[RMDB]
RNA sequence: GGGAACGACUCGAGUAGAGUCGAAAACUCGAAAGAGACCUGCAUAUCUUAGGCAGAUGAGCAAGUCGCGUCUGAAAAGCGAAAGCCCUAAGAUAUGCAGCUGUGAUGACUUGACGCAGAAAAUAAACACCACGACUAAUUUCGAUUAGUCGUGGUGAAAAGAAACAACAACAACAAC
Reactivity to DMS in 0.01 (KOAc 150mM, MgCl2 10mM, bicine 150mM(pH8.5), 24C), signal-to-noise 1, nucleotides 027 to 126: c000u030c000g000a170a030a050g010a020g000a100c180c000u000g040c000a000u000a010u000c000u000u000a000g000g030c000a020g000a000u000g000a030g000c030a000a040g000u000c000g000c020g020u010c000u010g000a190a060a110a210g020c000g000a120a060a100g000c020c000c000u010a010a000g000a000u000a000u020g000c000a020g060c080u000g050u020g000a020u000g040a020c000u000u000g000a180c040g040c010a030g000a160a100a080a040u040a110a070a150
Reactivity to 2A3 in 0.01 (KOAc 150mM, MgCl2 10mM, bicine 150mM(pH8.5), 24C), signal-to-noise 4, nucleotides 027 to 126: c010u000c010g020a010a040a000g090a010g040a060c000c010u000g020c000a000u010a000u000c000u010u000a000g000g000c020a010g010a030u020g010a020g030c010a020a000g000u000c010g000c010g060u000c000u010g120a260a250a100a020g040c020g040a080a020a010g020c010c000c000u010a000a000g000a000u000a000u000g000c000a000g000c000u020g000u010g000a040u070g000a000c020u000u000g000a000c000g030c010a010g100a030a070a020a020u220a030a060a030